[RMDB]
RNA sequence: GGGAACGACUCGAGUAGAGUCGAAAACGAACCCUUCAGAUAAUGGCCUUGAUGGUGUGGUCGGUGAGAUUUAUUUUCGCGCAGGGUACGGCCUUGAAAGCGUGGCCAUGUAUGAGCAAAUGGCCGAAGGUUUUUGCAUUUACGGUGACGAAUGAUGAAACAAGCAGCAUUUCGAUGCUGCUUGUUUAAAAGAAACAACAACAACAAC
Reactivity to DMS in 0.01 (KOAc 150mM, MgCl2 10mM, bicine 150mM(pH8.5), 24C), signal-to-noise 1, nucleotides 027 to 156: c070g010a050a220c020c000c090u000u040c060a170g030a110u010a050a060u000g030g030c020c000u000u020g030a100u000g030g000u000g000u000g050g000u000c050g040g010u020g000a050g020a100u010u000u010a090u020u000u000u010c030g050c070g000c000a090g020g020g020u000a050c080g050g020c010c020u030u000g000a030a030a080g030c040g000u010g000g020c000c030a050u000g030u000a100u000g010a220g030c120a060a070a060u000g010g030c010c050g010a060a080g010g050u020u000u000u000u000g010c020a060u000u010u010a070c060g000g000u000g010a060c040g030a030a090u000g000a070u000g010
Reactivity to 2A3 in 0.01 (KOAc 150mM, MgCl2 10mM, bicine 150mM(pH8.5), 24C), signal-to-noise 1, nucleotides 027 to 156: c030g000a020a050c060c020c010u170u070c150a130g000a110u100a020a010u030g070g000c040c000u080u060g020a040u030g000g000u030g000u020g030g000u060c000g050g000u020g000a000g000a000u000u120u000a160u000u100u050u040c040g000c000g040c020a030g010g000g110u050a030c080g120g000c000c010u020u000g070a200a080a000g020c020g010u020g000g010c000c040a010u040g020u020a080u110g030a050g050c010a170a000a000u020g020g020c000c000g010a000a000g000g000u020u000u030u160u060g020c010a020u000u010u120a060c020g030g020u020g020a020c080g110a090a010u140g090a040u210g020
Source information: Chemical mapping of a 207-nucleotide RNA with DMS and 2A3. Reactivities are given for positions 27 through 156. DMS adducts were read by reverse transcription with MarathonRT. Conditions: 150 mM KOAc, 10 mM MgCl2 and 150 mM bicine (pH 8.5), 24 C. For 2A3 the reverse transcriptase was SuperScript II with manganese.